[RMDB]
RNA sequence: GGGAACGACUCGAGUAGAGUCGAAAAGGGUAUGGACUCUUUAAUUGAGGCCUCUCUAACACAUAAAACAUUAAACCUUCGUAGAUUCAUGAGCCGAAUCGUAGGAUGCCCGGAAUUUCUGUUUCUGACAUGUUUAUAACUUCGGUUAUAAACAUGUAAAAGAAACAACAACAACAAC
Reactivity to DMS in 0.01 (KOAc 150mM, MgCl2 10mM, bicine 150mM(pH8.5), 24C), signal-to-noise 5, nucleotides 027 to 126: g010g000g010u010a050u010g030g010a020c010u000c000u010u000u000a100a130u030u030g010a030g000g010c030c010u000c030u010c020u010a090a110c160a080c120a110u020a070a060a080a070c120a090u010u020a060a080a110c050c020u000u010c060g010u010a150g010a030u000u000c030a070u020g010a110g000c110c080g010a040a040u010c030g010u010a200g010g000a080u000g010c020c010c020g000g020a080a100u000u000u010c130u020g010u000u000u000c010u000g000
Reactivity to 2A3 in 0.01 (KOAc 150mM, MgCl2 10mM, bicine 150mM(pH8.5), 24C), signal-to-noise 9, nucleotides 027 to 126: g040g010g010u130a050u250g040g020a030c000u020c000u050u150u150a230a170u120u160g010a010g010g010c010c000u000c000u000c010u070a160a010c050a000c020a100u200a140a110a050a010c030a030u100u230a100a130a070c020c010u040u050c060g080u080a030g030a080u040u030c020a040u110g070a020g060c020c040g020a020a030u020c020g010u010a010g040g010a020u050g030c000c010c000g040g070a070a080u060u110u040c060u060g000u000u000u000c000u010g020
An RNA of 177 nucleotides, treated with DMS and 2A3 and read out base by base. 2A3 is a SHAPE reagent: it acylates the 2'-hydroxyl of flexible nucleotides of all four kinds. The RNA was probed in 150 mM KOAc, 10 mM MgCl2 and 150 mM bicine (pH 8.5) at 24 C. Reactivities are given for positions 27 through 126.